[RMDB]
RNA sequence: GGGAACGACUCGAGUAGAGUCGAAAAUACAAAAGAGACCAAGAACCUGGGCAUUCCUAGUACCAUCAAUGUUGACUUUCAGGCCAACAUUGAAAAUAUGGAUGAUCUACAGAAGGGAAAUCUCAUCGGCAAGAUGAAUAUCAAAGAAGGCUAAAUAACACCUUCGUUUCUUCGGAAACGAAGGUGUAAAAGAAACAACAACAACAAC
Reactivity to 2A3 in 0.01 (KOAc 150mM, MgCl2 10mM, bicine 150mM(pH8.5), 24C), signal-to-noise 1, nucleotides 027 to 156: u090a000c020a010a120a080a000g070a030g020a070c020c000a000a060g040a030a070c070c000u070g030g010g090c000a040u070u110c000c000u020a000g020u120a090c000c090a050u000c000a010a000u000g020u000u000g000a000c040u070u230u300c260a120g070g050c040c000a000a000c000a000u000u000g010a060a020a000a000u260a050u100g000g020a000u000g020a040u030c050u050a060c020a050g060a060a020g040g000g030a000a090a000u060c080u030c020a050u000c020g110g040c060a000a000g000a020u060g020a050a030u060a010u130c070a180a060a000g020a030a030g040g040c000u110a020a050a090u060a090